[RMDB]
RNA sequence: GGGAACGACUCGAGUAGAGUCGAAAAGAUAUGGAAUUCCACGAGGUCGAAGAACUCGGAAACGAGGGAGACCGAGUGGAGAUUCCUAAGUCAAACUGGAUUCCCUGCUUCGGCAGGGAAUCCAGAACGAAACGAACUAGUUCGCUAGUUCGUUUCGAAAAGAAACAACAACAACAAC
Reactivity to DMS in 0.01 (KOAc 150mM, MgCl2 10mM, bicine 150mM(pH8.5), 24C), signal-to-noise 1, nucleotides 027 to 126: g020a000u010a300u000g000g000a000a000u000u000c000c000a000c000g010a300g000g010u000c000g020a140a180g020a160a190c000u000c000g000g000a080a130a170c020g000a010g000g000g020a170g010a000c010c030g000a300g010u000g010g000a010g000a020u000u000c000c000u000a040a210g020u000c030a040a060a250c000u000g000g010a010u010u000c000c000c000u000g000c000u000u000c230g010g000c010a020g000g000g000a000a010u000c000c000a000g000a060a300
The data come from the RNA Mapping Database (RMDB), library TTRDEL. This 177-nucleotide RNA was probed chemically with DMS. Conditions: 150 mM KOAc, 10 mM MgCl2 and 150 mM bicine (pH 8.5), 24 C.